[RMDB]
Conditions: 150 mM KOAc, 10 mM MgCl2 and 150 mM bicine (pH 8.5), 24 C. Chemical mapping of a 177-nucleotide RNA with DMS and 2A3. Values are in units of 0.01, from 0 to 300, in steps of 10. For 2A3 the reverse transcriptase was SuperScript II with manganese. It was measured as part of the RMDB library OK1LIB. The 2A3 profile rests on 432 reads.
RNA sequence: GGGAACGACUCGAGUAGAGUCGAAAAGCAUUUGAAGCGAUUCUCAGUGGCUACGGAAAAAGAUUUGAUCAAGAAAGUUACAGAAGGAAAAGGAGGAUCUUCUGUCUCCUUUGUGAGCGAGUGCUUCACCGACCCAAGGUUUCGACCUUGGGUCGGUAAAAGAAACAACAACAACAAC
Reactivity to DMS in 0.01 (KOAc 150mM, MgCl2 10mM, bicine 150mM(pH8.5), 24C), signal-to-noise 1, nucleotides 027 to 126: g000c130a030u010u030u050g000a000a170g090c020g000a180u000u000c000u000c050a150g000u010g010g000c000u000a090c150g000g000a130a040a050a090a300g010a070u030u000u000g000a110u010c160a030a080g030a160a000a120g000u030u000a020c030a000g030a090a040g050g030a160a100a010a030g000g050a000g000g000a030u070c000u010u010c180u010g010u030c020u000c030c000u010u000u000g040u000g060a120g000c020g000a030g000u060g000c000u000u010c130
Reactivity to 2A3 in 0.01 (KOAc 150mM, MgCl2 10mM, bicine 150mM(pH8.5), 24C), signal-to-noise 1, nucleotides 027 to 126: g000c000a160u110u000u070g160a300a070g120c120g100a120u080u000c000u000c110a150g200u000g000g000c000u050a060c060g190g020a000a000a000a070a000g070a070u290u180u290g010a010u050c030a000a100g150a200a200a000g010u100u230a000c000a000g030a060a000g060g010a000a300a000a000g030g040a000g090g000a070u030c150u000u000c000u090g000u000c010u010c000c000u000u000u110g000u070g170a000g020c030g030a010g000u090g000c000u000u000c000